[RMDB]
RNA sequence: GGGAACGACUCGAGUAGAGUCGAAAACAGCGGAGUUUUAAACUUUAAAUAGACAGGUCUGAGUGCCUGAACUUGCCUUUUCAUUUUACUUCAUCCUCCAAGGAGUUCAAUCACUUGGCGUGACUUCCGUAAGUCGGUAGUUCGCUACCGACUUACGAAAAGAAACAACAACAACAAC
Reactivity to DMS in 0.01 (KOAc 150mM, MgCl2 10mM, bicine 150mM(pH8.5), 24C), signal-to-noise 2, nucleotides 027 to 126: c140a100g010c150g000g010a060g010u040u000u000u010a030a110a090c040u010u010u020a030a070a220u000a090g000a060c120a050g010g000u000c010u050g000a100g010u020g000c050c070u000g000a000a020c040u000u020g000c010c000u010u000u010u000c100a060u000u000u020u020a030c050u020u020c080a120u000c020c020u000c080c050a000a020g010g030a100g030u010u050c130a030a100u000c120a040c090u000u000g010g010c100g010u000g000a230c050u010u030c120
Reactivity to 2A3 in 0.01 (KOAc 150mM, MgCl2 10mM, bicine 150mM(pH8.5), 24C), signal-to-noise 3, nucleotides 027 to 126: c040a010g070c060g040g050a050g020u020u030u050u190a140a080a030c030u020u050u170a070a120a040u120a060g070a040c030a000g020g000u030c050u170g180a090g070u210g030c010c000u000g030a040a030c010u030u070g030c010c020u040u070u060u040c050a070u050u050u050u090a040c030u020u100c020a100u030c010c020u000c000c010a010a030g010g010a090g020u090u100c060a070a100u050c020a020c080u040u050g010g000c010g040u070g030a020c020u040u010c060